Chemical mapping of a 177-nucleotide RNA with 2A3 and DMS. For 2A3 the reverse transcriptase was SuperScript II with manganese. For DMS, 9,778 sequencing reads were counted.
RNA sequence: GGGAACGACUCGAGUAGAGUCGAAAAUGGAGAUGCAGUCAGAUGCCCUGGAUGCAGCUAGAGGAUGAUGCUUUGUACAUAUCCCAGGCUAAUUUCAUCCUGGCCUACCAGUUCCGUCCAGAUGGUGGAUGACAUGUUGAUUCGUCAACAUGUCAUCAAAAGAAACAACAACAACAAC
Reactivity to 2A3 in 0.01 (KOAc 150mM, MgCl2 10mM, bicine 150mM(pH8.5), 24C), signal-to-noise 6, nucleotides 027 to 126: u110g010g000a100g020a040u060g040c030a030g060u040c020a000g020a110u100g040c030c000c000u010g010g010a010u010g010c020a010g000c020u050a040g030a120g170g010a020u110g040a010u020g110c050u130u140u300g080u130a040c000a040u040a020u030c000c000c000a000g020g000c010u020a040a090u040u070u080c010a040u060c010c010u010g010g000c000c020u020a060c010c000a020g010u040u030c020c010g020u030c030c010a040g060a160u180g050g150u100g110
Reactivity to DMS in 0.01 (KOAc 150mM, MgCl2 10mM, bicine 150mM(pH8.5), 24C), signal-to-noise 7, nucleotides 027 to 126: u010g000g010a090g010a070u000g030c050a090g010u000c090a070g000a150u010g020c120c070c050u020g010g010a030u000g010c300a020g010c020u010a070g030a170g000g000a030u000g000a040u000g010c050u010u010u010g010u010a110c040a030u000a090u010c010c000c020a300g000g000c030u010a050a120u010u000u000c030a020u000c020c020u000g010g010c030c040u000a070c150c040a060g000u000u000c040c020g010u000c030c030a090g000a090u010g010g020u010g000